Background: This 207-nucleotide RNA was probed chemically with 2A3. 2A3 adducts were read by reverse transcription with SuperScript II with manganese. Source: RMDB library OK3TST, as collected in RNAgym.

[RMDB]
RNA sequence: GGGAACGACUCGAGUAGAGUCGAAAAGACGGUGACCGCCAGCGGCCUGGACCUGGUGCGGCCCGUCCAGGCCGCGUGGGGAACUGGCUCGCGACUGUACCCAGUGCGCACCGCGCAGCUGACCGAACAGCCCACGCUGACCCGGCUGACCGAUACCCAGUAGUGCUAACUUCGGUUAGCACUACUGAAAAGAAACAACAACAACAAC
Reactivity to 2A3 in 0.01 (KOAc 150mM, MgCl2 10mM, bicine 150mM(pH8.5), 24C), signal-to-noise 1, nucleotides 027 to 156: g090a010c030g000g000u050g040a220c100c050g100c120c000a010g050c010g050g000c010c030u000g000g000a030c030c080u080g000g000u100g070c160g060g110c040c040c000g010u000c020c020a010g000g030c000c000g040c000g020u000g000g030g000g010a050a080c060u070g080g000c070u040c070g070c020g090a060c060u060g060u240a190c060c060c020a030g000u050g080c000g000c080a140c180c070g040c030g000c010a030g000c010u040g020a040c020c040g010a080a020c010a030g060c040c040c010a020c060g020c050u120g170a210c050c000c000g030g010c020u070g000a010c000c010g010a080u090a100c000c000
Conditions: 150 mM KOAc, 10 mM MgCl2 and 150 mM bicine (pH 8.5), 24 C.